[RMDB]
RNA sequence: GGGAACGACUCGAGUAGAGUCGAAAAAAGAUACCAAAUGCGAUGUAUAUGAGAGAGAUGAAUCCCAUGCCGAGAGCCAAGACUUUGCCAAACUUGUCCUUGUCCUUCAUCUCCGAUUCAAGAGGCAAGACCAUUCCAACGCCUUCGAAGGAAUAGAACUCACUCAUAGCUUCGGCUAUGAGUGAGUAAAAGAAACAACAACAACAAC
Reactivity to 2A3 in 0.01 (KOAc 150mM, MgCl2 10mM, bicine 150mM(pH8.5), 24C), signal-to-noise 1, nucleotides 027 to 156: a000a000g090a110u090a040c070c070a030a100a050u100g010c040g080a070u150g100u120a120u010a100u300g010a030g020a010g000a000g000a070u020g040a040a000u040c000c000c000a000u020g040c000c000g140a090g000a000g090c030c000a010a000g030a040c090u050u010u000g090c070c000a100a050a160c060u090u020g000u030c000c000u010u040g060u090c000c000u020u050c040a070u000c100u000c030c040g050a010u050u120c040a010a000g030a000g060g000c000a010a000g020a000c000c040a050u130u000c060c000a010a020c070g000c030c030u060u110c010g040a010a070g000g020a000a000u000a070g050a040
The record gives the reactivity of an RNA of 207 nucleotides to 2A3. The reactions ran in a buffer of 150 mM KOAc, 10 mM MgCl2 and 150 mM bicine (pH 8.5), at 24 C. Values are in units of 0.01, from 0 to 300, in steps of 10. The data come from the RNA Mapping Database (RMDB), library OK3TST.